Source information
Structure probing data (2A3 and DMS) for a 207-nucleotide construct. The data come from the RNA Mapping Database (RMDB), library RNAMAK.
RNA sequence: GGGAACGACUCGAGUAGAGUCGAAAAGAAACGUUCGCGUUUCGAUUUACCUUUGUGACCAUCAGUGUAGCUACCCACCUUUAGAUAUACCCAUUGGGUAUGCUAAAGAGGCUACACGACGACGGUCACUCUGGUUAGGCACAGGUUUCGACCUGAAUUCUAGAAGUCAAUUCGUUGACUUCUAGAAAAAAGAAACAACAACAACAAC
Reactivity to 2A3 in 0.01 (KOAc 150mM, MgCl2 10mM, bicine 150mM(pH8.5), 24C), signal-to-noise 6, nucleotides 027 to 156: g010a010a050a000c050g020u080u080c200g020c010g090u010u020u010c010g000a000u090u110u120a020c000c000u000u030u020g010u000g000a010c010c000a040u040c050a080g000u010g000u010a000g010c010u040a120c030c020c070a060c020c000u020u000u000a040g040a090u050a030u000a050c010c030c100a300u140u290g000g000g000u000a000u000g000c000u000a000a000a000g010a010g000g000c000u000a000c000a000c010g000a000c020g000a010c030g010g000u000c000a000c000u010c000u000g020g020u040u130a080g090g000c110a040c010a140g030g010u060u170u210c150g110a050c000c010u020g030a060a110
Reactivity to DMS in 0.01 (KOAc 150mM, MgCl2 10mM, bicine 150mM(pH8.5), 24C), signal-to-noise 4, nucleotides 027 to 156: g000a020a020a010c020g030u010u000c210g040c180g030u000u010u000c010g020a190u000u000u000a040c020c010u000u010u010g020u020g010a030c000c000a030u000c000a160g000u000g010u000a000g010c000u000a020c020c010c030a300c160c010u000u010u000a000g000a110u000a010u000a000c000c000c010a290u000u000g060g060g030u000a000u000g020c020u000a000a000a020g010a130g020g000c000u000a020c020a010c020g020a050c140g040a010c010g050g010u000c000a010c010u000c020u000g010g010u000u000a030g010g010c070a130c020a050g020g010u000u000u000c140g010a140c020c000u000g000a090a150